[RMDB]
RNA sequence: GGGAACGACUCGAGUAGAGUCGAAAAGCGGAAAUGAGUGCGUGGUAGCACAAACCAAACCAAUCCGCGGCACAAGGUCGCACAUGCACAGCUUCGCCUGUGCAAAGCGAACAAGGCGAACAAAGAAGACUAGUAAUAUGUUCGCAUAUUACUAGUCAAAAGAAACAACAACAACAAC
Reactivity to DMS in 0.01 (KOAc 150mM, MgCl2 10mM, bicine 150mM(pH8.5), 24C), signal-to-noise 9, nucleotides 027 to 126: g010c000g000g000a020a080a080u020g010a170g010u010g010c170g020u010g020g010u040a120g020c080a050c080a060a170a070c070c080a050a100a110c120c090a100a150u000c010c000g020c000g000g030c040a070c070a040a300g000g000u000c000g010c010a060c150a220u010g000c010a000c000a010g000c010u040u040c290g000c190c000u000g010u000g000c010a000a070a070g000c010g000a020a030c020a070a200g000g000c010g010a060a080c200a040a060a120g010a120a110
Reactivity to 2A3 in 0.01 (KOAc 150mM, MgCl2 10mM, bicine 150mM(pH8.5), 24C), signal-to-noise 9, nucleotides 027 to 126: g010c000g010g060a040a060a100u180g030a130g040u040g020c110g030u090g080g110u160a050g070c050a020c040a100a040a030c040c030a100a020a010c010c020a010a040u010c000c000g000c000g020g000c040a040c020a240a050g090g010u000c000g000c010a040c010a140u050g000c000a000c000a000g000c010u240u230c110g030c030c010u000g000u000g000c000a010a010a000g000c010g010a040a000c010a020a020g050g010c020g020a040a030c050a080a110a030g150a100a010
About this RNA
Chemical mapping of a 177-nucleotide RNA with DMS and 2A3. 2A3 adducts were read by reverse transcription with SuperScript II with manganese. For DMS, 36,993 sequencing reads were counted. Conditions: 150 mM KOAc, 10 mM MgCl2 and 150 mM bicine (pH 8.5), 24 C.